[RMDB]
RNA sequence: GGGAACGACUCGAGUAGAGUCGAAAAGCGCUGAAGAUCGCCAUUGCCUAUCAGCGCGCCAUCGGCCAGGGCACCCGCACCAUGGUUCUGGGCCGCGAGAAGGGGUAUCACGGCGUCGGCUUUGGCAUCGCUAUAUAGGAUUCGUCCUAUAUAGCGAAAAAGAAACAACAACAACAAC
Reactivity to DMS in 0.01 (KOAc 150mM, MgCl2 10mM, bicine 150mM(pH8.5), 24C), signal-to-noise 9, nucleotides 027 to 126: g030c080g020c000u010g000a030a070g010a090u010c060g010c010c020a070u000u000g000c020c000u000a200u010c010a110g010c010g010c120g020c010c010a060u010c160g010g000c020c020a060g000g000g010c050a120c090c070c110g000c130a120c040c020a060u000g000g010u000u000c070u000g010g010g010c010c020g000c040g000a080g020a100a140g010g000g000g010u000a090u010c120a070c100g010g000c030g010u000c140g010g010c010u000u000u010g010g010c030a200
Reactivity to 2A3 in 0.01 (KOAc 150mM, MgCl2 10mM, bicine 150mM(pH8.5), 24C), signal-to-noise 8, nucleotides 027 to 126: g040c020g000c010u010g010a020a000g030a120u120c050g000c010c010a070u060u070g010c000c010u090a130u090c010a010g010c000g000c020g000c010c000a110u150c080g040g000c010c000a020g000g010g010c040a080c020c050c040g040c030a100c030c020a140u060g040g020u130u090c030u090g060g040g010c020c000g020c030g030a150g060a110a070g080g010g000g000u050a030u150c050a020c110g020g010c020g030u050c050g070g000c010u020u010u010g010g000c010a030
The record gives the reactivity of an RNA of 177 nucleotides to DMS and 2A3. It was measured as part of the RMDB library OK2TST. Conditions: 150 mM KOAc, 10 mM MgCl2 and 150 mM bicine (pH 8.5), 24 C. Reactivities are rounded to 0.1 and cut off at 0 and 3.